[RMDB]
An RNA of 177 nucleotides, treated with 2A3 and DMS and read out base by base. The DMS profile rests on 996 reads. The RNA was probed in 150 mM KOAc, 10 mM MgCl2 and 150 mM bicine (pH 8.5) at 24 C.
RNA sequence: GGGAACGACUCGAGUAGAGUCGAAAAAAGGCCCAUGUAAGGUCCAGUCAUUUGAACAGCGACAUGAUGUGGCCCAUACAGGCAAGGUCAUUUGUAUUUCGGAUGUCACUCGUGGUAAUGGGCUGACGCCCUGCUAAGUGUUCGCACUUAGCAGGGCAAAAGAAACAACAACAACAAC
Reactivity to 2A3 in 0.01 (KOAc 150mM, MgCl2 10mM, bicine 150mM(pH8.5), 24C), signal-to-noise 2, nucleotides 027 to 126: a000a010g050g000c010c000c030a010u000g110u030a060a040g080g100u060c020c010a000g000u020c060a060u000u050u140g090a080a010c070a050g050c040g070a030c060a030u020g000a000u110g090u090g110g020c000c000c010a030u190a100c050a020g130g000c000a070a060g080g030u060c000a000u010u030u150g100u080a260u010u210u150c040g000g010a040u000g030u020c030a090c210u060c030g100u010g090g000u120a110a060u020g000g000g000c000u020g030a010c020
Reactivity to DMS in 0.01 (KOAc 150mM, MgCl2 10mM, bicine 150mM(pH8.5), 24C), signal-to-noise 2, nucleotides 027 to 126: a160a220g050g020c040c000c010a080u000g010u000a120a070g000g010u020c020c010a080g010u010c010a010u000u010u010g030a060a030c190a180g030c010g010a070c160a030u010g010a040u020g010u010g010g000c040c020c010a030u020a060c140a060g020g010c060a040a070g030g020u010c010a000u000u000u000g040u000a140u010u000u000c000g040g020a040u000g030u000c010a030c080u000c150g030u000g000g060u000a120a020u010g010g000g000c010u000g000a120c150